[RMDB]
RNA sequence: GGGAACGACUCGAGUAGAGUCGAAAAGUGCACAGGGCCUAGAAGUAUGCUUUGCGUUUUGCUAACACCAAGCAAAUGUGUGUUUGCGGGGCUGAUGCUGUCAGCAAAUAUCCACAAAGCCAUGGGGUGCACAGCCUCUCAAAGGAGGAGACUAUAGGGAGUGUUAAGAAUUCGUUCUUAACACUCCAAAAGAAACAACAACAACAAC
Reactivity to 2A3 in 0.01 (KOAc 150mM, MgCl2 10mM, bicine 150mM(pH8.5), 24C), signal-to-noise 3, nucleotides 027 to 156: g000u010g000c030a000c020a050g010g180g060c000c050u060a050g060a140a010g090u170a070u170g010c030u040u030u020g030c040g060u000u080u110u010g030c020u030a060a000c020a000c010c030a050a050g070c090a030a140a100u120g100u000g000u010g000u010u000u000g020c010g010g070g010g000c100u090g030a140u150g030c080u120g050u120c010a020g000c020a000a080a030u170a070u030c040c000a020c040a070a030a000g030c040c000a010u030g010g040g000g090u000g000c000a000c000a010g000c010c000u000c000u030c190a090a070a030g050g050a000g000g020a010g030a010c110u110a050u220a220g060
Reactivity to DMS in 0.01 (KOAc 150mM, MgCl2 10mM, bicine 150mM(pH8.5), 24C), signal-to-noise 1, nucleotides 027 to 156: g000u010g000c020a080c020a140g000g050g000c000c000u010a180g040a070a190g010u000a100u000g010c000u000u000u000g010c000g010u000u000u010u000g000c050u020a050a080c020a040c040c040a110a150g050c000a100a140a050u000g060u010g000u000g000u000u010u000g030c000g010g000g020g000c050u000g040a050u000g020c060u030g000u010c040a110g040c000a010a020a050u010a100u000c090c030a030c000a060a040a060g030c000c130a180u010g020g010g010g020u000g000c020a050c050a080g040c030c010u010c000u000c070a040a110a220g010g050a150g020g040a110g010a060c040u000a120u020a120g030
This 207-nucleotide RNA was probed chemically with 2A3 and DMS. Values cover nucleotides 27 to 156. The 2A3 profile rests on 1,155 reads. The reactions ran in a buffer of 150 mM KOAc, 10 mM MgCl2 and 150 mM bicine (pH 8.5), at 24 C. For DMS the reverse transcriptase was MarathonRT.